[RMDB]
RNA sequence: GGGAACGACUCGAGUAGAGUCGAAAAGGUGAUUGUGAUACUCGCUACUGUCAUUCAUCGAAUGACAGUAUUACACUGCUACAAUCACAUUACGUGACUCAAUUAUUUAGCAGUGUAAUUGAUAACAUAACGCGAGAUAUGUUAAAGUCACGUAUCGCUUUUAUCAUCCCUUCGGGGAUGAUAAAAGAAAAGAAACAACAACAACAAC
Reactivity to DMS in 0.01 (KOAc 150mM, MgCl2 10mM, bicine 150mM(pH8.5), 24C), signal-to-noise 3, nucleotides 027 to 156: g010g020u010g000a060u000u000g000u000g020a150u000a070c010u000c020g010c060u000a020c000u000g000u000c010a000u000u000c010a240u010c260g030a030a010u000g000a020c010a010g010u000a000u000u000a010c010a030c030u010g000c000u000a030c060a010a040u000c000a040c020a170u020u000a020c020g050u010g000a040c000u010c060a060a120u000u000a140u000u000u000a040g010c020a070g030u010g000u000a000a020u000u000g030a200u000a030a090c060a060u020a030a170c150g030c000g000a050g000a130u000a030u050g010u000u000a070a110a100g000u000c000a010c010g000u000a070u000c120g000
Reactivity to 2A3 in 0.01 (KOAc 150mM, MgCl2 10mM, bicine 150mM(pH8.5), 24C), signal-to-noise 7, nucleotides 027 to 156: g080g000u000g000a000u010u010g000u010g010a000u020a050c000u000c000g000c000u010a000c000u000g000u010c000a000u000u010c040a150u170c250g010a000a000u000g000a000c000a000g000u000a000u000u000a000c000a000c000u000g010c000u040a000c000a000a000u010c000a000c000a010u060u130a010c000g000u000g010a000c010u020c090a130a270u140u100a130u140u260u140a020g000c000a000g000u000g000u000a000a000u000u020g050a010u050a160a020c030a070u090a060a000c100g000c010g000a000g040a070u020a010u030g050u020u120a170a120a020g010u000c000a000c000g000u000a050u060c070g000
The record gives the reactivity of an RNA of 207 nucleotides to DMS and 2A3. For DMS, 5,703 sequencing reads were counted. The reactions ran in a buffer of 150 mM KOAc, 10 mM MgCl2 and 150 mM bicine (pH 8.5), at 24 C. For 2A3 the reverse transcriptase was SuperScript II with manganese.